About this RNA: Structure probing data (DMS and 2A3) for a 177-nucleotide construct. It was measured as part of the RMDB library OK1LIB. For DMS the reverse transcriptase was MarathonRT. The 2A3 profile rests on 45,849 reads. Conditions: 150 mM KOAc, 10 mM MgCl2 and 150 mM bicine (pH 8.5), 24 C. 2A3 adducts were read by reverse transcription with SuperScript II with manganese.

RNA sequence: GGGAACGACUCGAGUAGAGUCGAAAAGUCACCUGGCGCGGUAAGCGCCGGAAGGUAAAGCGAGCCGACGGACCCGAGCGGAUUUUUGGCGAGUGGUGGCAGCGCGACGCGGAGAUGGAGGCGGUGCCACCAUACCGCUGUUCGCAGCGGUAUGGUGAAAAGAAACAACAACAACAAC
Reactivity to DMS in 0.01 (KOAc 150mM, MgCl2 10mM, bicine 150mM(pH8.5), 24C), signal-to-noise 9, nucleotides 027 to 126: g010u020c060a090c050c010u010g010g010c010g010c010g010g020u050a090a160g010c010g010c000c000g000g010a110a060g010g010u010a050a100a120g010c050g000a150g010c030c020g010a100c060g010g000a130c060c020c010g000a110g010c060g010g000a080u000u010u010u010u020g010g010c040g000a110g020u010g000g020u010g000g010c020a040g000c030g000c030g000a100c080g000c060g000g000a100g010a100u020g000g000a130g000g010c030g000g010u010g010c050
Reactivity to 2A3 in 0.01 (KOAc 150mM, MgCl2 10mM, bicine 150mM(pH8.5), 24C), signal-to-noise 9, nucleotides 027 to 126: g050u040c020a030c060c020u040g010g000c010g000c020g040g230u300a150a130g020c000g000c010c000g000g020a060a020g030g020u110a070a050a040g050c040g020a020g020c020c010g030a040c020g040g040a030c000c000c020g010a020g000c040g010g070a090u040u060u050u110u190g090g010c050g010a050g020u090g030g030u030g050g000c040a040g030c020g010c020g040a050c030g010c030g030g020a060g010a050u090g050g010a020g020g030c020g020g030u030g020c010